RNA sequence: GGGAACGACUCGAGUAGAGUCGAAAAUAAGGGGAGAGGAGGAAUCCCGAGGGGAUCGCCCACUAAAGAGUAGAGGAAUUCUCGGAAAGCUCUCCCAAGAAGAACCAGAAUCCCUCAAGAGAGAGGAGUAUCGGACAGUUCGCUGUCCGAAAAAGAAACAACAACAACAAC
Reactivity to 2A3 in 0.01 (KOAc 150mM, MgCl2 10mM, bicine 150mM(pH8.5), 24C), signal-to-noise 4, nucleotides 027 to 129: u140a010a060g000g000g000g000a000g000a040g020g020a040g030g070a020a020u040c050c000c010g010a030g010g020g000g000a040u020c010g090c010c010c020a030c000u130a060a170a040g120a030g020u100a020g020a040g050g020a050a020u070u000c010u000c040g000g010a090a010a020g000c000u000c010u010c010c010c000a000a020g010a000a010g010a010a010c010c020a040g040a030a060u060c000c000c000u010c010a050a040g100a010g000a000g010a030g060g010a030g010u050a050
Reactivity to DMS in 0.01 (KOAc 150mM, MgCl2 10mM, bicine 150mM(pH8.5), 24C), signal-to-noise 3, nucleotides 027 to 129: u050a090a080g030g000g010g000a040g000a000g000g000a080g030g020a120a090u000c060c040c030g000a090g050g000g010g010a070u020c130g050c030c000c070a070c110u020a060a110a080g020a050g040u050a110g010a080g000g010a090a030u000u030c020u010c000g050g030a060a010a050g020c030u050c050u000c000c050c020a070a050g010a110a040g000a050a040c080c070a100g030a040a020u050c060c010c020u040c030a100a150g020a080g010a060g030a050g020g010a000g000u040a060
The record gives the reactivity of an RNA of 170 nucleotides to 2A3 and DMS. Conditions: 150 mM KOAc, 10 mM MgCl2 and 150 mM bicine (pH 8.5), 24 C. It was measured as part of the RMDB library 15KLIB. Reactivities are given for positions 27 through 129.